Structure probing data (DMS and 2A3) for a 207-nucleotide construct. The 2A3 profile rests on 869 reads. As a SHAPE reagent, 2A3 marks flexible, mostly unpaired nucleotides at the ribose 2'-OH. For DMS, 2,158 sequencing reads were counted. The reactions ran in a buffer of 150 mM KOAc, 10 mM MgCl2 and 150 mM bicine (pH 8.5), at 24 C.
RNA sequence: GGGAACGACUCGAGUAGAGUCGAAAAUCACCAUGAUCCUGGGAAAGAACUAUGAUGCCUCUGGCCCAUCUAUCAAAUUUGAGUGGCUCCACCCACUAGAAUGCCCUAUUUCUCUCAAAUUGAGUUCCUCAUCAAGGGUGGUAAUAGAAGAGGAUGCCUGUUUAGCUCUGUUCGCAGAGCUAAACAGAAAAGAAACAACAACAACAAC
Reactivity to DMS in 0.01 (KOAc 150mM, MgCl2 10mM, bicine 150mM(pH8.5), 24C), signal-to-noise 1, nucleotides 027 to 156: u000c010a130c040c010a110u010g020a010u000c080c030u000g030g030g020a150a070a160g000a090a050c030u020a090u010g010a040u000g050c030c010u000c020u010g050g000c020c010c000a100u000c080u000a150u010c080a110a040a200u000u000u000g010a060g010u000g040g000c010u000c010c020a050c000c000c010a250c100u000a070g020a150a090u010g010c000c030c010u010a120u000u010u010c020u000c030u010c040a040a040a150u000u000g000a080g030u000u010c010c010u040c030a190u000c090a080a150g020g030g000u000g000g010u010a080a110u010a110g010a070a100g000a060g000g010a070u010g010c070
Reactivity to 2A3 in 0.01 (KOAc 150mM, MgCl2 10mM, bicine 150mM(pH8.5), 24C), signal-to-noise 2, nucleotides 027 to 156: u080c000a040c000c000a020u080g040a060u090c020c020u030g070g000g020a000a190a040g060a050a030c060u060a100u210g090a040u060g080c000c000u050c100u070g070g000c040c020c010a040u030c040u100a100u070c030a030a110a150u150u090u100g020a020g020u120g020g010c020u020c010c000a040c000c000c000a070c020u010a010g030a140a040u110g030c020c000c000u020a120u030u100u020c030u000c000u020c050a050a060a150u040u050g000a050g030u010u020c000c010u030c000a090u020c050a040a050g020g050g000u000g000g010u060a100a120u060a100g080a080a010g000a000g000g010a000u000g030c010